[RMDB]
RNA sequence: GGGAACGACUCGAGUAGAGUCGAAAACACAAUUCUCUAAGCGAUGAGAAGCGUGUGGAAAAUUAGGGAAGGGCUACGGCUAUAAUCCUAAGAAUGCUUAUCUACAAGCGGAGGUAUUCUCAGAACGAAAACCAUUUGGCGUUCGCGCCAAAUGGAACAUGUCGUCCAAGUUCGCUUGGACGACAUGAAAAGAAACAACAACAACAAC
Reactivity to 2A3 in 0.01 (KOAc 150mM, MgCl2 10mM, bicine 150mM(pH8.5), 24C), signal-to-noise 1, nucleotides 027 to 156: c020a000c010a050a040u080u060c000u010c010u060a120a120g180c110g160a110u080g010a070g020a010a000g120c050g000u050g000u060g000g050a110a060a040a070u100u070a090g020g020g020a040a030g110g010g000c050u050a040c140g020g000c000u010a040u020a300a040u050c010c000u010a020a040g010a030a000u050g050c020u040u110a060u180c050u090a070c060a140a050g110c120g010g000a010g030g010u050a060u080u000c040u030c020a080g080a160a060c150g060a040a010a060a100c000c000a000u000u000u000g000g000c000g000u010u030c110g000c000g000c160c000a000a000a000u000g000g000a000a000
Source information
Conditions: 150 mM KOAc, 10 mM MgCl2 and 150 mM bicine (pH 8.5), 24 C. This 207-nucleotide RNA was probed chemically with 2A3. For 2A3, 567 sequencing reads were counted. For 2A3 the reverse transcriptase was SuperScript II with manganese.